[RMDB]
RNA sequence: GGGAACGACUCGAGUAGAGUCGAAAAAUUGUGGCGCUGGAGUGGUUGCCGGUGGAAUUACUGCUGGCGCUCGGCAUCGUGCCUUACGGCGUGGCGGAUACCAUCAACUAUCGCCUGUGGGUCAGCACGAUCCUAUCACUUUCGAGUGAUAGGAUCGAAAAGAAACAACAACAACAAC
Reactivity to DMS in 0.01 (KOAc 150mM, MgCl2 10mM, bicine 150mM(pH8.5), 24C), signal-to-noise 3, nucleotides 027 to 126: a110u000u000g020u010g010g020c060g040c000u010g000g000a090g020u010g010g020u000u000g050c030c050g000g030u010g000g020a150a090u010u010a120c040u000g010c050u000g010g020c010g020c000u010c070g010g020c080a080u000c120g010u000g000c010c000u000u000a080c140g010g020c020g020u010g000g000c250g010g020a070u010a080c190c090a080u000c090a100a050c090u000a060u020c060g010c020c020u000g010u000g000g000g030u010c070a100g000c090a180
Reactivity to 2A3 in 0.01 (KOAc 150mM, MgCl2 10mM, bicine 150mM(pH8.5), 24C), signal-to-noise 2, nucleotides 027 to 126: a000u160u100g030u030g070g000c050g010c030u060g030g030a100g040u060g000g060u070u110g060c030c000g040g000u070g030g060a100a100u140u000a170c020u020g190c000u000g020g010c000g000c040u000c000g020g000c010a030u080c110g070u110g000c000c010u050u080a030c030g000g000c010g010u010g010g000c060g040g000a020u030a140c030c010a040u100c010a010a080c010u070a030u150c030g000c000c030u020g040u050g030g010g010u040c020a010g020c050a030
The data come from the RNA Mapping Database (RMDB), library OK2TST. This 177-nucleotide RNA was probed chemically with DMS and 2A3. The DMS profile rests on 2,607 reads. Reactivities are rounded to 0.1 and cut off at 0 and 3.